Description: An RNA of 177 nucleotides, treated with DMS and 2A3 and read out base by base. 2A3 adducts were read by reverse transcription with SuperScript II with manganese. The DMS profile rests on 3,830 reads. For DMS the reverse transcriptase was MarathonRT.
[RMDB]
RNA sequence: GGGAACGACUCGAGUAGAGUCGAAAAACAGGUGCUACGGCACCUGAACCUGUGGGAAAGGUCCAACCUCACAUGUCCUGUAUAGAAUAAAGAGGGAUAUAUGUGGUCAGACCUAUCCCACAAGUAAUUGAAGAAUUGCUUUCGAGCAAUUCUUCAAAAAAGAAACAACAACAACAAC
Reactivity to DMS in 0.01 (KOAc 150mM, MgCl2 10mM, bicine 150mM(pH8.5), 24C), signal-to-noise 3, nucleotides 027 to 126: a070c000a000g020g010u020g010c000u000a040c200g010g000c010a000c020c000u000g000a060a030c000c000u000g000u000g000g010g010a020a170a060g000g000u010c010c050a270a020c020c010u000c000a040c020a020u000g010u000c000c010u000g000u100a220u060a180g020a160a150u050a120a160a080g000a300g010g000g000a000u000a010u010a090u010g000u010g010g010u000c140a210g020a010c010c000u000a040u000c000c000c020a000c000a000a010g000u030a100a090
Reactivity to 2A3 in 0.01 (KOAc 150mM, MgCl2 10mM, bicine 150mM(pH8.5), 24C), signal-to-noise 4, nucleotides 027 to 126: a000c000a010g010g010u000g000c000u040a030c180g090g000c010a000c010c000u000g000a000a050c000c000u000g000u000g000g000g010a020a010a050g010g000u000c010c000a030a010c030c020u020c000a000c000a000u000g030u020c000c000u040g140u200a170u050a090g300a200a080u230a130a110a040g160a150g000g010g000a000u010a000u000a000u010g020u030g000g000u010c010a000g000a000c000c000u000a000u000c000c000c000a010c000a000a000g000u030a020a090